[RMDB]
RNA sequence: GGGAACGACUCGAGUAGAGUCGAAAAGUAUUAUUUCCUUUUAUUGACAUGAUAGGGUCAUUGCCCGCAACCGCGGAGUGGAAACAGGAAACGAUGCAGGAUGUCAGCGUGUUGAACCGCCUGAGCGACCUAGGAUAUCUUUCGAGAUAUCCUAGGUAAAAGAAACAACAACAACAAC
Reactivity to 2A3 in 0.01 (KOAc 150mM, MgCl2 10mM, bicine 150mM(pH8.5), 24C), signal-to-noise 8, nucleotides 027 to 126: g080u040a070u190u030a060u030u100u050c010c000u040u060u050u110a240u070u090g040a000c020a040u160g080a150u200a180g170g010g000u030c050a050u010u190g040c000c010c020g000c050a090a130c050c100g000c010g020g040a110g030u060g040g120a080a060a010c060a040g020g060a020a030a010c040g020a010u050g030c030a020g050g080a060u070g090u080c010a020g010c050g050u050g030u050u110g030a070a030c050c010g020c010c010u050g040a070g040c030g020
Reactivity to DMS in 0.01 (KOAc 150mM, MgCl2 10mM, bicine 150mM(pH8.5), 24C), signal-to-noise 8, nucleotides 027 to 126: g020u020a050u010u010a100u010u010u000c020c000u000u020u030u010a060u030u000g000a050c040a070u010g010a140u020a070g010g010g010u000c030a040u000u010g010c030c000c010g010c070a080a090c170c140g010c030g000g000a080g010u010g010g010a090a070a090c130a050g000g000a060a050a050c050g010a050u000g000c030a070g000g010a090u010g000u010c050a030g010c080g020u000g020u010u010g010a070a080c090c030g000c030c010u010g010a080g000c100g000